The record gives the reactivity of an RNA of 207 nucleotides to DMS and 2A3. The DMS profile rests on 3,726 reads. It was measured as part of the RMDB library OK3TST. The RNA was probed in 150 mM KOAc, 10 mM MgCl2 and 150 mM bicine (pH 8.5) at 24 C. The 2A3 profile rests on 3,861 reads.

RNA sequence: GGGAACGACUCGAGUAGAGUCGAAAACGCAUCCGAUCAAAACAACAGCGACGCAAACGACACAGAAUGGCCUCCAACGUCAACGACGUGAUCGACAGAGGCGAUGUAAUUAUCGAACCACCAAUGGACGUAAAUUUGGCCAGCUCGAUUGAUCGUGACCCUUCAAUCAUUUCGAUGAUUGAAGGGUAAAAGAAACAACAACAACAAC
Reactivity to DMS in 0.01 (KOAc 150mM, MgCl2 10mM, bicine 150mM(pH8.5), 24C), signal-to-noise 3, nucleotides 027 to 156: c060g030c030a120u010c020c010g030a150u000c040a080a130a150a190c080a030a030c030a120g030c050g030a190c070g000c030a040a110a140c080g010a070c060a210c020a180g000a080a300u000g030g030c010c000u000c100c020a090a160c010g040u000c000a100a080c060g030a090c110g000u010g000a070u020c020g010a080c060a060g000a120g010g000c040g000a060u020g010u000a010a110u000u030a020u000c000g030a020a090c000c130a040c010c040a020a070u010g000g030a120c030g000u000a020a120a230u000u000u030g010g000c000c040a040g000c050u020c000g020a120u000u020g000a070u000c060g010u000g000
Reactivity to 2A3 in 0.01 (KOAc 150mM, MgCl2 10mM, bicine 150mM(pH8.5), 24C), signal-to-noise 6, nucleotides 027 to 156: c090g000c020a030u070c020c000g040a050u090c090a030a110a060a110c090a040a030c020a060g050c030g060a050c060g060c060a050a100a060c060g060a020c040a000c000a120g100a140a130u080g050g000c010c010u060c050c040a050a010c010g010u020c020a060a090c130g080a020c050g040u040g040a070u070c050g020a010c030a040g110a050g090g000c040g000a020u060g020u060a090a080u100u150a040u040c020g040a040a080c060c010a040c040c020a070a080u110g050g020a030c020g030u050a020a120a220u160u090u070g010g000c020c000a030g020c030u020c020g050a070u010u070g050a080u020c000g030u050g050